[RMDB]
RNA sequence: GGGAACGACUCGAGUAGAGUCGAAAAGGGGAAGAUUCAGUGAUUGGGUCUUACUGAAGGGGCUCUUGAGUGCUGAGAGCUCCACGAGAGGAAGAAGAUGCCUGGGUGCUGAGUAAGGAAACUGACAUGGAACACCUGCCUUCCACCAGGCAGGGCAAAAUUUAUCAGCAUUCGUGCUGAUAAAUUUAAAAGAAACAACAACAACAAC
Reactivity to 2A3 in 0.01 (KOAc 150mM, MgCl2 10mM, bicine 150mM(pH8.5), 24C), signal-to-noise 2, nucleotides 027 to 156: g000g000g010g000a000a040g010a060u040u030c020a010g080u070g180a190u110u120g020g020g020u010c020u050u040a050c040u060g060a080a090g020g000g000g020c020u040c020u000u040g110a140g090u150g040c110u120g050a010g000a010g010c010u020c020c010a010c020g120a140g010a000g000g010a040a010g000a000a030g010a040u080g060c000c020u050g010g070g040u040g010c020u030g010a040g010u000a090a050g030g010a030a080a060c020u050g040a050c020a100u140g040g020a040a010c020a070c040c000u000g030c000c010u050u080c060c010a060c040c010a000g010g000c010a010g000g010g010c000a030
Reactivity to DMS in 0.01 (KOAc 150mM, MgCl2 10mM, bicine 150mM(pH8.5), 24C), signal-to-noise 2, nucleotides 027 to 156: g010g010g040g010a060a060g020a060u000u000c020a020g040u000g000a230u000u000g010g000g000u010c050u010u000a110c050u010g020a130a090g020g040g000g020c000u000c000u010u000g000a210g030u000g010c200u040g020a050g010a020g030c010u000c000c020a020c050g000a210g030a130g010g000a080a060g010a060a080g020a100u000g010c020c070u000g020g000g030u000g010c090u010g010a060g010u050a120a100g000g000a070a090a040c060u010g010a110c060a120u010g010g020a100a110c060a030c000c010u020g000c000c010u000u000c020c090a080c090c090a080g010g020c020a020g010g030g000c090a050
This 207-nucleotide RNA was probed chemically with 2A3 and DMS. High DMS reactivity at an A or C suggests that its Watson-Crick edge is free. For DMS the reverse transcriptase was MarathonRT. Reactivities are given for positions 27 through 156. For 2A3 the reverse transcriptase was SuperScript II with manganese. The reactions ran in a buffer of 150 mM KOAc, 10 mM MgCl2 and 150 mM bicine (pH 8.5), at 24 C.